About this RNA
This 207-nucleotide RNA was probed chemically with 2A3. 2A3 adducts were read by reverse transcription with SuperScript II with manganese. The RNA was probed in 150 mM KOAc, 10 mM MgCl2 and 150 mM bicine (pH 8.5) at 24 C.
RNA sequence: GGGAACGACUCGAGUAGAGUCGAAAAGACUGAAGUCGACUCUCUAGCUAGCUUCAGUCCUCUGAUCCUUCGAAGCUAGUCGACUAGGAAGCUUCUCAGCUAGGAUCGAGAGACUUCAGGACUGAAGUCGAUCUCCUAGUCGAAGUCGAUCGAGAUCACUGACACCUGAUUUCGAUCAGGUGUCAGUAAAAGAAACAACAACAACAAC
Reactivity to 2A3 in 0.01 (KOAc 150mM, MgCl2 10mM, bicine 150mM(pH8.5), 24C), signal-to-noise 1, nucleotides 027 to 156: g020a010c050u070g030a070a000g050u070c020g000a010c010u100c010u020c070u170a010g000c000u000a000g010c000u000u000c020a030g010u030c000c030u100c070u060g030a050u000c040c030u090u040c050g010a010a000g000c000u010a000g020u000c000g020a030c000u000a000g020g030a050a050g020c010u180u070c100u070c130a020g000c020u130a030g130g100a100u110c110g010a070g030a040g010a080c000u000u050c010a010g160g050a120c170u050g000a000a000g000u010c000g000a000u000c020u000c000c000u030a000g050u030c010g000a020a000g000u000c000g000a010u000c000g020a020g000a070u050c000